[RMDB]
RNA sequence: GGGAACGACUCGAGUAGAGUCGAAAAGAUAUGGAUGUAGUCAUUUGGGAGCGUACAUGUCGGAAACGACAUUAACGCAUCGAUCAAAUGAGCUACAUCCUAAGUCAAAUCGGCCUUCGGGCCGAAACAAUAUUAAACGGUUCGCCGUUUAAUAUUGAAAAGAAACAACAACAACAAC
Reactivity to DMS in 0.01 (KOAc 150mM, MgCl2 10mM, bicine 150mM(pH8.5), 24C), signal-to-noise 9, nucleotides 027 to 126: g000a030u010a300u010g000g010a010u000g020u000a010g020u000c000a010u000u000u000g010g000g000a040g030c000g020u010a090c300a030u000g010u000c000g010g000a130a100a270c000g010a010c000a000u000u010a190a050c010g010c000a200u000c200g000a090u010c000a000a010a010u000g000a080g010c010u000a000c000a010u000c000c000u010a010a080g010u010c030a060a120a160u000c000g000g010c000c010u000u010c230g040g010g010c000c000g010a000a050a130
Reactivity to 2A3 in 0.01 (KOAc 150mM, MgCl2 10mM, bicine 150mM(pH8.5), 24C), signal-to-noise 8, nucleotides 027 to 126: g050a010u100a030u190g010g000a010u000g000u010a000g020u050c010a010u010u010u020g030g020g020a060g000c010g000u020a030c040a160u010g000u010c010g020g020a060a070a040c010g000a000c000a000u030u060a100a020c000g010c040a120u300c030g050a070u090c010a010a000a000u040g020a050g120c010u000a000c000a000u000c000c000u000a020a010g000u000c010a010a030a240u060c010g010g000c010c000u100u160c300g090g000g000c000c000g000a000a000a000
Chemical mapping of a 177-nucleotide RNA with DMS and 2A3.
Reactivities are given for positions 27 through 126.
For 2A3 the reverse transcriptase was SuperScript II with manganese.